Conditions: 150 mM KOAc, 10 mM MgCl2 and 150 mM bicine (pH 8.5), 24 C.
Structure probing data (2A3 and DMS) for a 177-nucleotide construct.
Values cover nucleotides 27 to 126.
Source: RMDB library M2PK90, as collected in RNAgym.
For DMS the reverse transcriptase was MarathonRT.
RNA sequence: GGGAACGACUCGAGUAGAGUCGAAAAUUGUGGUCAAGUCCUUGGCGUAGUAUCCAAGGUUGUCAAGGUUCCUAUUGACUUAACAAUGAUUGAGUUUAUGUUAUGGUGUAAGGAUGGACAGGGGAAAUCUGAUCUAGUUGUUCGCAACUAGAUCAGAAAAAGAAACAACAACAACAAC
Reactivity to 2A3 in 0.01 (KOAc 150mM, MgCl2 10mM, bicine 150mM(pH8.5), 24C), signal-to-noise 2, nucleotides 027 to 126: u020u010g010u010g020g000u040c020a040a020g060u010c000c000u000u000g000g000c060g040u100a050g040u040a140u070c050c010a040a030g000g000u030u070g010u000c030a040a040g050g000u100u070c000c010u060a090u000u060g020a000c000u040u040a060a000c040a040a060u080g040a160u060u140g070a070g150u070u070u030a120u120g060u110u050a030u150g030g000u070g030u050a020a090g060g000a060u060g000g020a010c020a010g040g000g000g040a000a040a100
Reactivity to DMS in 0.01 (KOAc 150mM, MgCl2 10mM, bicine 150mM(pH8.5), 24C), signal-to-noise 5, nucleotides 027 to 126: u000u000g030u000g010g020u000c030a040a070g000u000c000c000u000u000g000g000c200g010u010a140g020u010a130u010c030c050a030a040g000g010u010u000g010u000c070a070a090g010g010u010u000c030c060u000a070u000u000g020a020c010u000u000a080a030c030a040a060u010g000a140u010u010g010a110g000u000u000u010a060u010g030u010u000a070u000g020g000u010g000u000a050a080g000g010a060u000g010g010a050c070a060g010g000g000g010a060a070a100